[RMDB]
RNA sequence: GGGAACGACUCGAGUAGAGUCGAAAAAGACACAGUGUCACUGUAUCUAAUGGAAGCUCUGUGUAGGCUCCAGUGGAAAUCUGGUUACAGUUUCAAAAAGUAGCUACCUGUGCACAGCAGAAGCAAAGCCAUAGUAGACGUUCGCGUCUACUAUGGCAAAAGAAACAACAACAACAAC
Reactivity to DMS in 0.01 (KOAc 150mM, MgCl2 10mM, bicine 150mM(pH8.5), 24C), signal-to-noise 1, nucleotides 027 to 126: a050g000a060c040a100c060a040g020u000g020u000c110a070c020u000g000u000a070u000c020u020a080a160u010g000g010a070a140g030c060u000c050u000g000u010g010u000a020g020g000c020u000c000c000a050g020u000g000g060a120a100a070u000c010u000g010g020u020u010a060c130a050g000u000u010u000c090a060a050a080a030a040g010u000a100g020c000u000a090c170c010u010g020u000g000c090a080c060a040g040c000a010g020a090a010g010c040a060a070a090

Source: RMDB library OK2TRN, as collected in RNAgym. This 177-nucleotide RNA was probed chemically with DMS. The reactions ran in a buffer of 150 mM KOAc, 10 mM MgCl2 and 150 mM bicine (pH 8.5), at 24 C. The DMS profile rests on 787 reads. DMS adducts were read by reverse transcription with MarathonRT.